[RMDB]
RNA sequence: GGGAACGACUCGAGUAGAGUCGAAAAAGAUGGCGGCGUUUGCACGGAGUGCAAUCACUGCGUCCUUACGGGGGUUGCAAGGCGUCCGAAGUAUGAGUCCACUAACAAAAGUCCAGAAACUCGCCAGUCUCAAUAUUGCGUUCGCGCAAUAUUGAGAAAAAGAAACAACAACAACAAC
Reactivity to 2A3 in 0.01 (KOAc 150mM, MgCl2 10mM, bicine 150mM(pH8.5), 24C), signal-to-noise 4, nucleotides 027 to 126: a010g140a040u170g070g030c000g010g000c020g000u010u040u050g020c020a020c100g120g070a150g020u080g020c020a040a030u050c010a000c120u050g020c020g010u020c020c010u050u020a040c030g010g000g000g000g020u040u010g030c050a060a050g040g000c020g100u040c030c010g020a050a000g040u050a080u120g040a010g020u000c030c020a040c060u080a100a020c040a070a060a030a000g040u020c010c020a030g080a040a070a030c000u030c050g050c010c000a040g060
Reactivity to DMS in 0.01 (KOAc 150mM, MgCl2 10mM, bicine 150mM(pH8.5), 24C), signal-to-noise 2, nucleotides 027 to 126: a100g010a100u000g000g020c040g020g020c100g000u000u020u000g020c010a060c010g020g020a260g020u020g000c040a020a030u020c040a020c020u020g040c000g020u010c030c030u000u000a140c090g000g000g020g000g030u040u020g000c090a040a060g000g000c030g010u010c070c030g000a080a050g000u000a030u010g000a150g000u010c010c000a120c120u030a070a040c160a000a070a050a090g010u010c040c080a030g000a090a070a040c060u020c000g000c020c030a090g010